An RNA of 177 nucleotides, treated with DMS and 2A3 and read out base by base. Conditions: 150 mM KOAc, 10 mM MgCl2 and 150 mM bicine (pH 8.5), 24 C. For 2A3 the reverse transcriptase was SuperScript II with manganese.
[RMDB]
RNA sequence: GGGAACGACUCGAGUAGAGUCGAAAAGCUUGAUGCGGCCAAUUGCUGACAGAAAAGCUACCUUAGGGAUAACAGAGUCGUCACUCGCAAGAGCACAUAUCGACCGAGUGGCUUGCUACCUCGAUGUAGGUAAACCAUUAUUCGUAAUGGUUUACCUAAAAGAAACAACAACAACAAC
Reactivity to DMS in 0.01 (KOAc 150mM, MgCl2 10mM, bicine 150mM(pH8.5), 24C), signal-to-noise 9, nucleotides 027 to 126: g010c010u000u000g010a300u010g000c030g010g020c000c300a120a090u030u020g020c000u000g020a120c010a030g000a100a070a030a010g010c000u000a150c000c000u000u020a070g010g000g000a070u010a050a060c090a060g010a090g010u010c300g010u000c030a030c010u000c010g010c030a040a250g000a020g000c190a100c280a100u030a080u010c010g000a300c300c020g000a030g010u010g000g000c000u010u010g010c050u000a060c040c010u000c030g010a130u020g010u000
Reactivity to 2A3 in 0.01 (KOAc 150mM, MgCl2 10mM, bicine 150mM(pH8.5), 24C), signal-to-noise 9, nucleotides 027 to 126: g000c000u020u020g010a010u020g020c010g020g010c020c080a160a180u230u260g000c010u010g050a220c000a020g080a070a110a000a000g000c010u030a070c000c000u020u110a070g010g020g030a090u080a170a080c060a060g090a040g160u110c040g010u010c020a000c010u000c000g000c010a030a020g010a010g060c100a040c030a260u270a080u060c010g020a010c010c000g000a010g000u000g000g000c000u010u080g010c020u050a070c000c010u030c040g060a070u140g070u140